RNA sequence: GGGAACGACUCGAGUAGAGUCGAAAAAUGGUGCGGAAGUUCGCGCUUCCGUGAAACGCGAAAAUCGGACGGUGGCUGCAAGUCGCAUCGCAAAACCGCGGCAAGUGGAGUUAGCGAGAGGAGGCUGAAACCAUCCAACACUUCGGUGUUGGAUGAACCGGUAUAUGACGUUCGCGUCAUAUACCGGAAAAGAAACAACAACAACAAC
Reactivity to DMS in 0.01 (KOAc 150mM, MgCl2 10mM, bicine 150mM(pH8.5), 24C), signal-to-noise 1, nucleotides 027 to 156: a040u000g040g030u010g050c000g000g000a100a160g000u000u000c240g010c210g000c000u000u000c010c120g010u030g010a060a020a010c020g080c000g000a090a010a080a120u000c060g000g010a080c040g020g000u000g000g030c010u000g090c010a080a080g000u020c030g070c020a150u000c060g000c040a110a100a100a110c000c040g010c020g000g020c080a040a230g070u000g000g020a050g010u020u000a190g010c000g000a100g000a080g000g020a100g050g000c000u010g020a060a060a090c080c040a130u000c010c010a010a000c050a020c000u010u010c300g020g030u000g060u000u000g000g000a000u000g030a030a040
Reactivity to 2A3 in 0.01 (KOAc 150mM, MgCl2 10mM, bicine 150mM(pH8.5), 24C), signal-to-noise 2, nucleotides 027 to 156: a000u080g020g000u060g000c000g000g010a020a000g050u130u160c090g020c040g000c120u010u000c020c010g010u040g000a060a080a000c060g010c010g060a050a010a010a070u190c060g000g010a000c040g020g020u020g020g020c020u060g040c040a080a020g000u030c020g000c040a060u020c050g020c080a090a100a030a000c040c000g030c010g030g050c090a130a120g030u030g040g090a070g000u060u080a000g020c040g040a050g000a020g100g070a010g020g000c010u010g020a090a030a000c040c010a000u000c000c000a000a000c000a000c010u030u130c170g080g000u000g000u000u000g000g040a000u000g000a010a050
This 207-nucleotide RNA was probed chemically with DMS and 2A3. The RNA was probed in 150 mM KOAc, 10 mM MgCl2 and 150 mM bicine (pH 8.5) at 24 C. For DMS the reverse transcriptase was MarathonRT. DMS (dimethyl sulfate) methylates the pairing face of unpaired adenines and cytosines.